Chemical mapping of a 207-nucleotide RNA with 2A3. Conditions: 150 mM KOAc, 10 mM MgCl2 and 150 mM bicine (pH 8.5), 24 C. The 2A3 profile rests on 647 reads. Source: RMDB library OK3TST, as collected in RNAgym. 2A3 adducts were read by reverse transcription with SuperScript II with manganese.
RNA sequence: GGGAACGACUCGAGUAGAGUCGAAAACUUCACCGAUCCUUCAAGACCUAUGAACCUGAUAAAGCAAGGUGAAUACGGAUAUGAUGAAAACGGAUUCGAGAUCCCGCCUAUGGAGCAGGUUAUUCCAAUAUCCGGCACGACGCGAAGACCGAGUGCGGUAACGUCAGUUCUUCGGAACUGACGUUACAAAAGAAACAACAACAACAAC
Reactivity to 2A3 in 0.01 (KOAc 150mM, MgCl2 10mM, bicine 150mM(pH8.5), 24C), signal-to-noise 2, nucleotides 027 to 156: c020u020u030c030a000c010c060g000a010u020c030c000u050u040c010a020a030g110a080c000c000u050a010u050g070a020a040c010c020u050g020a160u160a220a120a080g140c140a040a000g000g020u000g020a010a040u120a070c130g000g000a010u040a050u170g080a010u030g020a020a030a090a030c060g000g070a010u060u070c060g040a060g030a100u040c000c020c030g020c000c000u110a140u150g030g020a090g040c030a040g090g000u050u080a050u140u150c000c010a070a020u050a100u040c030c000g010g000c010a000c010g110a040c000g040c020g030a080a100g030a060c000c050g010a060g050u110g010c000g010